[RMDB]
RNA sequence: GGGAACGACUCGAGUAGAGUCGAAAAACAAAGAUGGUGUCAACGCCAAGGUCGCGCACAUCGAGUACGACCCGAACCGUACCGCACGGAUUGCGUUGCUCCACUAUCUCGAUGGGGAGAAGCGCUACCUUACAGAAACCUUCGGGUUUCUGUAAGGAAAAGAAACAACAACAACAAC
Reactivity to DMS in 0.01 (KOAc 150mM, MgCl2 10mM, bicine 150mM(pH8.5), 24C), signal-to-noise 3, nucleotides 027 to 126: a070c120a120a110a110g010a030u000g010g000u000g010u010c060a050a030c050g010c000c230a140a100g030g010u000c020g020c040g040c040a090c090a120u010c170g000a060g010u000a040c030g000a060c020c020c010g000a060a160c030c030g000u010a110c180c220g010c200a070c030g010g000a100u010u010g000c010g000u010u010g000c040u000c010c010a040c020u000a020u000c030u000c170g010a060u000g000g000g000g010a090g020a070a050g000c050g010c060u010a120
Reactivity to 2A3 in 0.01 (KOAc 150mM, MgCl2 10mM, bicine 150mM(pH8.5), 24C), signal-to-noise 4, nucleotides 027 to 126: a000c050a010a100a000g070a120u090g010g030u040g160u220c040a070a050c030g010c020c030a010a030g040g030u050c010g000c030g020c030a020c020a210u140c060g000a010g020u030a040c020g000a020c030c010c000g020a040a030c010c010g010u040a070c050c070g080c070a020c030g000g040a090u060u170g020c010g010u010u020g010c000u020c010c000a120c040u070a070u030c080u020c100g100a080u080g000g000g040g000a060g010a100a000g020c010g010c040u010a060